[RMDB]
RNA sequence: GGGAACGACUCGAGUAGAGUCGAAAACAUCAUCGUCAUGGUCGUCUGGCUCUCGCCGGACACCGGGUCAACGGUCUCGGCCGCCAAGUCGCUCCUGCGUCUCAGCGACGACGAGGAUGAAGGCAGCGGGUGUACGGAGAUUCGUCUCCGUACACCCAAAAGAAACAACAACAACAAC
Reactivity to DMS in 0.01 (KOAc 150mM, MgCl2 10mM, bicine 150mM(pH8.5), 24C), signal-to-noise 1, nucleotides 027 to 126: c060a050u020c030a050u020c020g010u000c000a260u020g010g030u000c170g030u010c050u020g020g000c020u010c180u000c240g040c000c000g030g020a050c010a000c020c030g010g020g100u010c090a070a100c110g020g000u000c050u010c140g020g010c030c050g000c020c090a050a180g000u000c010g000c000u000c020c060u030g000c170g000u010c010u000c130a050g010c030g000a020c140g000a070c020g010a090g000g020a020u000g010a100a060g000g010c060a040g030c120